[RMDB]
RNA sequence: GGGAACGACUCGAGUAGAGUCGAAAAGAUAUGGAUCCUCACUGAAGCGAAGACAGUCGGAAACGAUCGAGCUUCAGGUGACAUGGAUCCUAAGUCAAACCAUCUUCGCGUUCGCGCGAAGAUGGAACGUUAUUUAGAACUUCGGUUCUAAAUAACGAAAAGAAACAACAACAACAAC
Reactivity to DMS in 0.01 (KOAc 150mM, MgCl2 10mM, bicine 150mM(pH8.5), 24C), signal-to-noise 8, nucleotides 027 to 126: g000a050u000a300u000g000g000a020u000c000c000u000c010a030c000u000g010a010a020g020c010g000a080a120g000a090c300a080g010u000c010g010g000a120a070a170c010g010a020u000c030g010a140g000c000u000u000c000a020g010g000u000g000a060c300a110u010g010g000a020u000c000c000u000a020a070g010u000c030a100a080a170c000c000a010u000c000u000u000c000g010c000g010u010u020c240g020c010g020c000g010a010a010g000a000u000g000g000a010a020
Reactivity to 2A3 in 0.01 (KOAc 150mM, MgCl2 10mM, bicine 150mM(pH8.5), 24C), signal-to-noise 6, nucleotides 027 to 126: g030a020u070a050u150g010g000a000u000c000c000u010c010a030c010u010g000a010a000g010c050g070a070a030g080a090c070a050g050u040c020g030g050a080a070a050c030g010a050u120c030g000a010g000c000u000u010c010a010g000g070u050g010a050c130a170u150g000g000a000u000c000c010u020a110a010g060u030c050a070a040a100c000c000a000u000c000u000u000c000g000c010g050u050u080c270g030c010g010c010g140a000a000g010a000u000g000g000a010a000